An RNA of 177 nucleotides, treated with 2A3 and read out base by base.
It was measured as part of the RMDB library OK1LIB.
The 2A3 profile rests on 521 reads.
The RNA was probed in 150 mM KOAc, 10 mM MgCl2 and 150 mM bicine (pH 8.5) at 24 C.
RNA sequence: GGGAACGACUCGAGUAGAGUCGAAAAGAGGGCGUGUGGAUCCCUGUGUCCAUGGACCGACCGUGGGAGGCCUCACCAUCCGUCCAUAUUUUGACUGAAGUAUUAAAAGGUGUUUUAAAUAGAUCCACCACGGGAGGAAGUUCGCUUCCUCCCGUGGAAAAGAAACAACAACAACAAC
Reactivity to 2A3 in 0.01 (KOAc 150mM, MgCl2 10mM, bicine 150mM(pH8.5), 24C), signal-to-noise 2, nucleotides 027 to 126: g250a050g040g060g020c100g000u080g030u020g000g100a210u060c050c010c000u040g010u030g020u000c000c000a040u160g020g000a010c000c110g030a020c000c000g030u000g000g040g000a010g060g020c000c000u020c000a040c000c000a000u050c000c000g020u000c000c000a040u200a130u140u210u000u040g070a080c080u040g050a110a030g140u220a060u210u170a160a040a000a070g020g060u080g000u000u150u050u120a060a150a210u140a000g140a030u010c000c000a010
Record summary: Reactivities are given for positions 27 through 126.